About this RNA
Chemical mapping of a 177-nucleotide RNA with 2A3. High 2A3 reactivity points to a flexible backbone, as in loops and unpaired stretches. It was measured as part of the RMDB library OK1LIB. The RNA was probed in 150 mM KOAc, 10 mM MgCl2 and 150 mM bicine (pH 8.5) at 24 C.

RNA sequence: GGGAACGACUCGAGUAGAGUCGAAAAACGAGGUAGCUAUCGGCAAAACAGUUACCAUUCAAGAAGUAGGCGAAAGCGAAGAGGAAGUCUACAUUAUUGUUGGUUCUGCUGGUGCAGAUGCUUUCGCACCCAUCGAUCGUUUCGACGAUCGAUGGGUAAAAGAAACAACAACAACAAC
Reactivity to 2A3 in 0.01 (KOAc 150mM, MgCl2 10mM, bicine 150mM(pH8.5), 24C), signal-to-noise 4, nucleotides 027 to 126: a030c060g010a040g020g140u130a010g000c130u170a000u050c000g050g010c000a040a040a090a050c020a020g010u120u130a050c000c000a030u070u110c010a000a000g030a040a000g020u010a000g030g000c000g110a260a100a060g110c100g070a110a050g030a140g200g100a060a090g010u020c010u010a000c010a010u070u150a010u000u010g000u000u000g040g000u020u000c040u020g000c010u010g060g050u070g000c000a020g000a020u010g010c000u040u050u000c010g010c010